[RMDB]
RNA sequence: GGGAACGACUCGAGUAGAGUCGAAAAGGCGUCUUCGCUGCCUCGGCCGCCCUGCACUGACCGGUAGCCGCCGUAAUAGCGGCAUUGUUCCCAUAAAAGGAUGUGGGUGUGGGUGUCGAAGUAGCAGACCAUCGUGCUAUUUCGAUAGCACGAUGGUAAAAGAAACAACAACAACAAC
Reactivity to DMS in 0.01 (KOAc 150mM, MgCl2 10mM, bicine 150mM(pH8.5), 24C), signal-to-noise 3, nucleotides 027 to 126: g030g020c130g000u000c080u010u010c110g000c010u000g000c010c030u000c020g000g000c030c030g020c080c010c000u010g000c010a050c040u010g010a090c040c060g010g020u000a100g030c010c020g050c000c030g030u000a120a140u080a080g010c010g010g030c000a080u010u000g010u000u000c010c000c030a120u010a020a070a080a130g000g010a160u010g020u000g000g000g000u000g030u000g010g010g020u000g010u000c000g000a030a050g010u000a020g020c010a110g010
Reactivity to 2A3 in 0.01 (KOAc 150mM, MgCl2 10mM, bicine 150mM(pH8.5), 24C), signal-to-noise 2, nucleotides 027 to 126: g090g030c040g120u040c040u130u090c110g020c010u030g000c010c010u010c010g030g000c010c040g050c070c000c010u040g000c030a010c000u070g130a080c040c010g060g000u020a050g010c000c010g000c010c000g020u030a050a040u090a120g000c000g000g000c000a000u000u240g050u040u020c010c000c010a000u140a050a170a010a000g090g030a060u180g030u220g140g000g000u040g000u020g010g020g000u050g020u010c010g000a020a000g000u020a010g000c020a010g020